This 207-nucleotide RNA was probed chemically with DMS and 2A3. The reactions ran in a buffer of 150 mM KOAc, 10 mM MgCl2 and 150 mM bicine (pH 8.5), at 24 C. For 2A3 the reverse transcriptase was SuperScript II with manganese. Values cover nucleotides 27 to 156. For DMS, 1,313 sequencing reads were counted. The 2A3 profile rests on 1,934 reads. DMS adducts were read by reverse transcription with MarathonRT.
[RMDB]
RNA sequence: GGGAACGACUCGAGUAGAGUCGAAAAGGGGUCAGUUCCUCGCGUUGCAUGCGAGGUAUGGCUGAAGCCUCCACGGCCAUACUACCCACCGCAUGAACUACAACGCACGCGAGGAACUGACGGAGGCACCCAAAACGUAAAAUGUUCGCAUUUUACGCAAAGGCAGGAUGUUCGCAUCCUGCCUUUGAAAAGAAACAACAACAACAAC
Reactivity to DMS in 0.01 (KOAc 150mM, MgCl2 10mM, bicine 150mM(pH8.5), 24C), signal-to-noise 1, nucleotides 027 to 156: g100g040g020g040u000c000a000g010u000u000c030c000u000c000g010c000g000u000u040g080c030a020u010g000c000g010a160g000g000u000a020u000g030g000c010u010g020a080a110g020c030c010u000c010c000a300c080g000g000c060c000a000u000a010c000u000a060c030c020c050a300c110c000g000c000a080u010g000a000a100c180u060a190c150a170a160c220g070c280a130c050g060c000g000a020g010g010a040a020c010u000g020a030c000g020g010a040g110g070c050a050c000c010c030a080a070a150a160c000g010u010a000a060a000a000u000g030u000u000c250g000c010a010u000u000u000u000a030c000g070
Reactivity to 2A3 in 0.01 (KOAc 150mM, MgCl2 10mM, bicine 150mM(pH8.5), 24C), signal-to-noise 2, nucleotides 027 to 156: g100g010g040g010u010c010a000g000u010u000c000c000u000c000g010c000g010u070u160g090c010a010u010g020c010g020a040g010g000u010a000u000g010g030c000u010g010a050a000g020c000c010u030c000c000a010c010g000g010c000c010a010u000a010c000u070a030c060c110c110a080c050c000g000c000a010u080g030a270a170c040u170a060c220a300a030c150g060c140a020c010g010c000g000a010g010g000a010a000c010u000g000a000c000g000g000a000g000g020c010a050c010c000c000a030a100a000a000c000g020u000a020a000a010a000u030g020u090u110c140g020c140a010u000u010u010u010a030c030g000